Description: Chemical mapping of a 177-nucleotide RNA with 2A3 and DMS.
[RMDB]
RNA sequence: GGGAACGACUCGAGUAGAGUCGAAAAUACUACGCGGCCUCCCACCUCUCUGCCCGGAGCCGGCCGCGCGCCCAGAGACCCGGCCGGCUCCCACCGUCGCUUGGUCGACGACCCGCCGCGCCAACAACAGAGAGAAGAAAUUCGUUUCUUCUCUCUGAAAAGAAACAACAACAACAAC
Reactivity to 2A3 in 0.01 (KOAc 150mM, MgCl2 10mM, bicine 150mM(pH8.5), 24C), signal-to-noise 1, nucleotides 027 to 126: u030a030c060u040a030c020g010c000g040g020c030c020u000c050c010c000a070c020c010u050c010u030c050u070g070c060c040c010g020g000a020g010c040c040g020g090c010c000g070c020g030c050g000c020c020c060a150g040a040g000a140c030c040c050g000g000c000c000g020g000c020u010c000c000c000a020c020c000g020u010c000g020c120u150u230g090g030u160c000g020a020c030g020a020c060c000c000g040c000c020g000c010g040c030c020a090a080c000a020a000
Reactivity to DMS in 0.01 (KOAc 150mM, MgCl2 10mM, bicine 150mM(pH8.5), 24C), signal-to-noise 3, nucleotides 027 to 126: u010a130c050u010a100c030g020c020g020g020c010c060u000c010c020c010a140c080c040u000c030u000c060u000g010c030c060c090g030g030a020g040c030c010g030g010c010c010g010c100g020c060g010c020c020c090a170g000a190g010a080c040c070c020g010g020c010c010g010g010c010u010c000c010c060a050c100c030g020u000c010g030c040u010u000g030g010u020c000g010a030c010g000a110c050c060c040g000c030c020g020c030g000c040c050a040a080c130a060a170
Source information: For 2A3 the reverse transcriptase was SuperScript II with manganese. Reactivities are given for positions 27 through 126.